[RMDB]
RNA sequence: GGGAACGACUCGAGUAGAGUCGAAAAUCCUGAGUACCAUGCGUCAUUAUUCGCGUGGGAAUAUGGGUGGCAUGAACAUCCAACCCUAAAUAUUACUCAAGUCCGAUAGCAAAGAAGUACCGUGAGGGAUACCUUCGCAGUUCGCUGCGAAGGUAUCAAAAGAAACAACAACAACAAC
Reactivity to DMS in 0.01 (KOAc 150mM, MgCl2 10mM, bicine 150mM(pH8.5), 24C), signal-to-noise 2, nucleotides 027 to 126: u030c000c000u040g000a120g000u000a180c020c000a020u000g020c000g060u020c300a180u040u030a160u000u010c020g000c000g050u010g000g000g000a070a000u010a140u000g000g000g000u010g020g000c120a080u010g000a090a030c210a050u000c050c000a020a160c000c000c000u010a020a120a160u030a140u060u000a120c000u040c000a090a110g030u000c010c050g000a010u000a060g010c080a070a020a030g000a070a080g000u000a070c130c030g000u030g000a190g010g020
Reactivity to 2A3 in 0.01 (KOAc 150mM, MgCl2 10mM, bicine 150mM(pH8.5), 24C), signal-to-noise 6, nucleotides 027 to 126: u000c000c000u000g030a000g010u000a020c000c000a000u010g000c000g080u090c130a280u090u300a140u120u090c010g010c000g000u000g000g030g110a000a020u230a150u060g010g000g010u000g000g000c090a120u150g110a070a060c010a080u020c030c000a040a190c030c010c000u010a040a040a050u190a060u130u080a070c010u010c040a020a020g060u000c010c000g100a080u070a020g060c030a020a120a090g040a050a020g020u020a040c000c010g060u080g090a060g000g100
This 177-nucleotide RNA was probed chemically with DMS and 2A3. It was measured as part of the RMDB libraries RFM100 and RFMREP. For DMS the reverse transcriptase was MarathonRT. The RNA was probed in 150 mM KOAc, 10 mM MgCl2 and 150 mM bicine (pH 8.5) at 24 C.